[RMDB]
RNA sequence: GGGAACGACUCGAGUAGAGUCGAAAAGCGCCAACGCCCCCGUCGUCGGGACCGCCGCCGCCGCGUUCGCUGCCCUGAUGGUCGAACGGAUGGCCGCUAAAUCCGUGGCCGCAGCCAGCAAUGCCUCAUGUAACAAUUUUUUCGAAAAUUGUUACAUAAAAGAAACAACAACAACAAC
Reactivity to 2A3 in 0.01 (KOAc 150mM, MgCl2 10mM, bicine 150mM(pH8.5), 24C), signal-to-noise 3, nucleotides 027 to 126: g020c030g050c020c030a060a060c060g050c010c000c010c020c000g070u040c010g020u010c000g060g020g050a080c030c030g010c010c000g020c000c010g020c020c030g030c010g010u030u050c050g000c030u030g020c010c000c020u090g050a160u130g030g000u040c030g030a060a020c000g030g010a040u040g050g020c010c010g000c050u050a090a120a050u010c020c010g000u030g010g000c000c010g000c020a000g000c010c000a020g020c020a010a090u070g010c010c010u070c020
Reactivity to DMS in 0.01 (KOAc 150mM, MgCl2 10mM, bicine 150mM(pH8.5), 24C), signal-to-noise 9, nucleotides 027 to 126: g010c070g000c050c050a100a140c120g000c030c030c020c020c040g020u000c070g020u000c060g020g000g010a090c070c050g010c040c040g010c040c040g020c040c050g000c040g010u000u000c090g010c050u000g010c100c060c030u000g010a080u010g020g010u000c010g010a130a060c030g000g000a060u000g010g030c040c060g000c060u000a060a090a060u000c030c030g040u000g000g000c010c020g010c050a050g010c300c020a040g010c040a070a070u010g000c020c050u000c150
The record gives the reactivity of an RNA of 177 nucleotides to 2A3 and DMS.
The RNA was probed in 150 mM KOAc, 10 mM MgCl2 and 150 mM bicine (pH 8.5) at 24 C.
Reactivities are given for positions 27 through 126.
The data come from the RNA Mapping Database (RMDB), library OK2TST.